The data come from the RNA Mapping Database (RMDB), library OK2TRN. The record gives the reactivity of an RNA of 177 nucleotides to 2A3 and DMS. 2A3 adducts were read by reverse transcription with SuperScript II with manganese. For 2A3, 1,240 sequencing reads were counted.
[RMDB]
RNA sequence: GGGAACGACUCGAGUAGAGUCGAAAACGGGUUUCGAGGUCAACCCUAACCUCCUAAAAUCAUUAAAAAUCACAGAGGAUGCAACAGAGGUUGUCGAGUCUCUUGAGAAUCUGAGGGUGGUGUACUACCUGCAGUACCAUUUCGAUGGUACUGCAGGAAAAGAAACAACAACAACAAC
Reactivity to 2A3 in 0.01 (KOAc 150mM, MgCl2 10mM, bicine 150mM(pH8.5), 24C), signal-to-noise 2, nucleotides 027 to 126: c040g000g010g070u060u170u170c070g050a030g060g140u130c060a050a070c000c010c000u020a030a020c000c030u050c000c010u020a060a090a020a090u060c030a030u140u270a090a120a030a030a030u120c030a040c030a030g020a040g060g020a040u120g090c000a010a030c010a040g080a030g220g020u030u040g040u090c010g000a020g110u010c000u000c000u090u080g050a040g010a050a040u040c070u120g040a080g090g070g030u050g070g070u050g040u040a080c030u070a060
Reactivity to DMS in 0.01 (KOAc 150mM, MgCl2 10mM, bicine 150mM(pH8.5), 24C), signal-to-noise 2, nucleotides 027 to 126: c170g000g010g020u000u020u000c120g000a030g000g010u010c270a050a030c000c010c000u010a120a030c040c040u010c000c080u000a070a040a150a100u010c130a130u000u000a020a090a090a160a050u000c050a060c140a050g000a210g000g000a040u010g010c040a010a170c120a150g000a050g020g010u000u000g000u000c060g010a120g010u000c000u000c030u000u000g000a300g000a070a050u000c060u000g000a140g000g000g000u000g030g000u000g000u010a110c160u000a060